Overview: The data come from the RNA Mapping Database (RMDB), library OK2TRN. An RNA of 177 nucleotides, treated with 2A3 and DMS and read out base by base. Reactivities are rounded to 0.1 and cut off at 0 and 3. The RNA was probed in 150 mM KOAc, 10 mM MgCl2 and 150 mM bicine (pH 8.5) at 24 C. 2A3 adducts were read by reverse transcription with SuperScript II with manganese. The 2A3 profile rests on 165,399 reads. DMS adducts were read by reverse transcription with MarathonRT.
RNA sequence: GGGAACGACUCGAGUAGAGUCGAAAAGGAUCCUUACCAGUCAGUAAGGUAACUUUGUCAUGUAAAGUUAGGCGAGACUGGACCUAAUGUCAUUUACCUUACUGAUGACAUUGGGUAGUAAGGAUCGCUACUACAUAGUAUUCGUACUGUGUAGUAGAAAAGAAACAACAACAACAAC
Reactivity to 2A3 in 0.01 (KOAc 150mM, MgCl2 10mM, bicine 150mM(pH8.5), 24C), signal-to-noise 9, nucleotides 027 to 126: g020g000a000u000c000c000u000u000a030c010c010a010g030u020c000a010g010u030a050a010g030g010u000a010a010c030u040u030u040g060u090c090a090u150g110u230a000a020a030g010u010u010a030g060g050c060g030a130g010a090c020u020g020g020a020c000c000u000a010a000u010g000u000c000a000u000u010u040a040c000c000u020u030a020c020u030g000a000u010g000a000c000a050u030u050g040g000g000u010a020g020u010a010a010g000g000a000u000c000g000
Reactivity to DMS in 0.01 (KOAc 150mM, MgCl2 10mM, bicine 150mM(pH8.5), 24C), signal-to-noise 9, nucleotides 027 to 126: g010g000a010u000c000c000u000u000a160c000c010a080g010u000c010a020g010u000a020a020g000g010u000a010a020c120u000u000u000g010u010c240a130u010g010u010a030a040a050g000u000u000a030g010g020c150g010a130g010a100c030u000g000g010a100c010c010u000a020a010u000g000u000c000a010u000u000u000a080c030c030u000u000a010c040u000g000a010u000g000a030c050a050u000u000g010g000g020u000a070g010u000a010a010g010g000a010u000c000g010